[RMDB]
RNA sequence: GGGAACGACUCGAGUAGAGUCGAAAAGACGUAAUCCGCGCAAAUCCACAAACGCCAACAAUGAGCGUUUCGCUGUAGCCGCUUAAGGCAACAGCCGGGGCCGCCUGAGCCCUGUUACCAAAGACGGGAAACUCGAUGCCAUUCGUGGCAUCGAGAACUAGUUCUCUCCCUUCGGGGAGAGAACUAGAAAAGAAACAACAACAACAAC
Reactivity to 2A3 in 0.01 (KOAc 150mM, MgCl2 10mM, bicine 150mM(pH8.5), 24C), signal-to-noise 1, nucleotides 027 to 156: g040a000c000g010u070a190a000u110c130c060g000c000g000c070a050a080a140u070c100c040a040c070a070a050a000c030g020c010c020a070a080c060a110a300u110g060a110g080c020g010u020u060u040c000g010c000u010g000u010a040g000c010c010g160c280u180u230a090a100g000g010c000a000a010c000a010g010c030c000g000g000g000g040c000c040g080c000c000u010g010a010g000c000c000c000u000g050u070u110a020c090c020a040a030a020g130a040c040g000g010g060a020a010a020c000u000c000g000a000u000g000c020c000a010u050u030c150g040u060g010g000c000a000u000c000g000a010g000a000a000
Structure probing data (2A3) for a 207-nucleotide construct. The reactions ran in a buffer of 150 mM KOAc, 10 mM MgCl2 and 150 mM bicine (pH 8.5), at 24 C. For 2A3, 494 sequencing reads were counted. Source: RMDB library M2RFPK, as collected in RNAgym.